Structure probing data (DMS and 2A3) for a 207-nucleotide construct.
The RNA was probed in 150 mM KOAc, 10 mM MgCl2 and 150 mM bicine (pH 8.5) at 24 C.
Source: RMDB library VIROID, as collected in RNAgym.
High 2A3 reactivity points to a flexible backbone, as in loops and unpaired stretches.
For 2A3 the reverse transcriptase was SuperScript II with manganese.
For DMS, 4,712 sequencing reads were counted.
RNA sequence: GGGAACGACUCGAGUAGAGUCGAAAACGAAGUCGGUUUGAGGCCCGGCGAAACGCGGGCCUGUCUCCUAAGAUGCCUCCGCUAGUCGAGCGGACUUGGCCUCUUCCGCCCGAGGACCUUUUCUUUCUGAUCUUGCUUGUUCCAACGAGCCCCGCGAGUUCAUAUAACGCUUCGGCGUUAUAUGAACAAAAGAAACAACAACAACAAC
Reactivity to DMS in 0.01 (KOAc 150mM, MgCl2 10mM, bicine 150mM(pH8.5), 24C), signal-to-noise 2, nucleotides 027 to 156: c040g030a080a180g020u000c050g010g020u000u000u030g020a050g020g040c030c030c030g100g040c050g020a060a150a090c120g010c000g020g050g020c010c030u000g010u030c030u000c040c000u000a050a110g030a070u000g020c040c030u000c040c000g050c040u000a230g000u000c120g000a170g010c020g010g020a020c050u000u010g010g030c000c020u010c040u000u000c000c020g040c020c000c010g030a130g000g010a110c020c030u000u000u000u000c050u010u000u000c060u000g010a130u000c030u000u010g030c010u000u000g010u000u000c060c030a080a150c060g010a180g030c030c010c010c000g020c090g010a300
Reactivity to 2A3 in 0.01 (KOAc 150mM, MgCl2 10mM, bicine 150mM(pH8.5), 24C), signal-to-noise 4, nucleotides 027 to 156: c040g050a050a040g100u110c050g030g050u060u110u180g090a050g010g000c010c000c040g140g060c100g110a170a100a030c170g020c010g030g000g000c010c000u000g010u010c040u000c000c010u030a000a040g020a030u050g010c010c000u020c000c000g010c020u050a070g190u220c120g120a010g030c020g020g000a010c030u100u140g020g010c000c000u020c000u080u010c030c030g040c010c010c010g040a020g040g000a080c020c000u060u130u040u030c040u040u100u000c030u050g030a120u040c030u040u100g030c030u050u060g030u090u140c020c010a050a070c080g020a020g030c020c000c010c000g050c020g040a030